[RMDB]
RNA sequence: GGGAACGACUCGAGUAGAGUCGAAAACCAAGGUAGUUCGCUACCUUGGAAAGAAAGCUGGAGCGAAGGGAAGGGAAAGGACGCUCGAGCAACCCACCCAAAAAAGAGCAUGCUUCGGCAUGCUCAACUUGAGAUAUUGCUUCGGCAAUAUCUCAAGAAAAGAAACAACAACAACAAC
Reactivity to DMS in 0.01 (KOAc 150mM, MgCl2 10mM, bicine 150mM(pH8.5), 24C), signal-to-noise 1, nucleotides 027 to 126: c010c000a000a000g000g010u010a020g000u000u010c250g030c010u000a010c000c000u000u000g030g000a030a050a080g010a040a040a130g010c040u000g030g010a010g000c010g010a120a150g030g000g010a090a050g000g000g000a070a110a080g000g000a220c050g030c010u000c030g000a020g010c010a090a110c000c010c000a150c090c050c090a000a070a060a020a060a060g010a010g010c000a000u000g000c010u000u000c270g020g040c000a010u000g010c000u000c000a010a050
Reactivity to 2A3 in 0.01 (KOAc 150mM, MgCl2 10mM, bicine 150mM(pH8.5), 24C), signal-to-noise 2, nucleotides 027 to 126: c000c000a000a010g020g020u010a000g010u050u070c200g030c090u000a000c000c020u000u020g000g020a050a020a010g050a030a080a000g010c060u090g060g030a020g000c020g060a070a050g090g030g060a070a100g070g010g020a190a140a060g050g050a010c010g020c000u010c020g090a000g020c010a010a110c010c000c010a030c000c030c000a020a190a060a050a010a010g000a000g000c000a000u010g000c000u050u060c240g070g000c000a000u000g000c000u010c010a000a010